Annotation:
Conditions: 150 mM KOAc, 10 mM MgCl2 and 150 mM bicine (pH 8.5), 24 C. This 177-nucleotide RNA was probed chemically with DMS. Values are in units of 0.01, from 0 to 300, in steps of 10. It was measured as part of the RMDB library M2PK50. The DMS profile rests on 2,188 reads.
[RMDB]
RNA sequence: GGGAACGACUCGAGUAGAGUCGAAAACUCGUCUGGUUCGCCAGACGAGAAAGAAAAUCCGAGCGAAGGGAAGGGCACAAACGCUCGGUGUGCCCAAACCCAAAACGUGGGGGUUCGCCCCCACGAAUCCUAUUACACACUUCGGUGUGUAAUAGGAAAAAGAAACAACAACAACAAC
Reactivity to DMS in 0.01 (KOAc 150mM, MgCl2 10mM, bicine 150mM(pH8.5), 24C), signal-to-noise 3, nucleotides 027 to 126: c010u000c000g000u010c020u010g000g000u000u000c200g040c000c000a010g000a000c000g000a010g000a020a060a120g000a070a080a120a070u000c010c000g010a070g020c010g020a120a130g010g000g020a180a220g000g010g000c040a020c020a040a080a100c150g000c080u000c020g010g010u000g010u000g000c000c010c010a070a090a200c020c050c020a060a040a100a150c030g020u000g000g000g010g000g040u000u000c200g000c020c000c000c000c000a000c000g010a040a100